[RMDB]
RNA sequence: GGGAACGACUCGAGUAGAGUCGAAAACUGGUGCAGGCGUGCGGCGAGGUGUACGCCUCGCACGCGCCGCGCCUGCCGCAGGCUGCCGCCAUCCUCAUGCUGGACGCGCUGGCGGCUGUGGCCGAGCCGACCUAAAUACGUUCGCGUAUUUAGGUCGAAAAGAAACAACAACAACAAC
Reactivity to 2A3 in 0.01 (KOAc 150mM, MgCl2 10mM, bicine 150mM(pH8.5), 24C), signal-to-noise 6, nucleotides 027 to 126: c020u030g030g000u040g000c170a230g040g000c010g030u040g060c250g070g000c000g020a010g030g000u120g060u150a070c280g000c000c000u000c000g000c000a010c000g000c000g000c000c000g000c010g000c000c010u010g000c000c010g000c000a030g300g040c010u020g000c000c000g000c000c000a030u030c010c010u100c040a180u300g110c130u080g070g020a010c030g090c050g030c160u270g010g000c000g000g000c000u010g000u000g000g000c010c030g040a030g060c030
Reactivity to DMS in 0.01 (KOAc 150mM, MgCl2 10mM, bicine 150mM(pH8.5), 24C), signal-to-noise 4, nucleotides 027 to 126: c060u010g020g030u000g010c010a080g030g000c000g040u000g000c130g020g010c000g000a010g010g020u000g020u010a060c230g000c000c000u000c020g000c000a040c010g010c000g010c010c020g000c000g000c000c000u000g010c010c010g010c000a020g010g010c010u000g000c000c010g010c010c000a070u000c010c000u000c210a160u020g010c190u000g000g010a030c030g010c180g010c020u000g040g010c010g000g010c010u000g000u000g000g010c000c240g000a070g010c110